Chemical mapping of a 177-nucleotide RNA with 2A3 and DMS. As a SHAPE reagent, 2A3 marks flexible, mostly unpaired nucleotides at the ribose 2'-OH. The reactions ran in a buffer of 150 mM KOAc, 10 mM MgCl2 and 150 mM bicine (pH 8.5), at 24 C. Source: RMDB library OK1LIB, as collected in RNAgym.
[RMDB]
RNA sequence: GGGAACGACUCGAGUAGAGUCGAAAAGAAGGAGAUGAAAGCGACUUUAGAAUCGGCUAACUGAGCAGUCAGAUUCAGACGGCAAGUAUCGUCGCCAGAGAUACAGUCGCAAAUAGCCGUAGGAGAAGACGGAUAUAAAUUUCGAUUUAUAUCCGUCAAAAGAAACAACAACAACAAC
Reactivity to 2A3 in 0.01 (KOAc 150mM, MgCl2 10mM, bicine 150mM(pH8.5), 24C), signal-to-noise 9, nucleotides 027 to 126: g110a040a040g070g050a100g010a050u130g080a070a060a030g010c010g010a020c010u110u130u120a070g020a050a050u030c010g010g000c010u030a060a050c060u140g070a030g060c040a020g030u040c020a030g020a120u070u030c020a020g030a050c010g010g000c010a040a070g020u040a050u100c070g080u050c030g080c090c020a030g010a000g000a070u030a030c030a010g020u010c000g000c020a030a090a000u070a010g010c010c010g020u070a040g010g140a080g010a120a030
Reactivity to DMS in 0.01 (KOAc 150mM, MgCl2 10mM, bicine 150mM(pH8.5), 24C), signal-to-noise 9, nucleotides 027 to 126: g010a110a080g000g010a100g000a080u020g010a070a110a100g010c020g000a060c020u010u000u020a090g010a100a070u020c010g010g000c000u000a050a110c070u010g000a070g010c130a050g000u010c050a070g010a100u010u010c070a080g010a160c030g010g000c030a100a100g020u010a020u010c060g010u010c070g000c070c090a070g000a090g000a090u010a020c050a090g010u000c020g000c040a020a080a070u010a060g000c020c010g010u010a070g010g000a130g020a130a130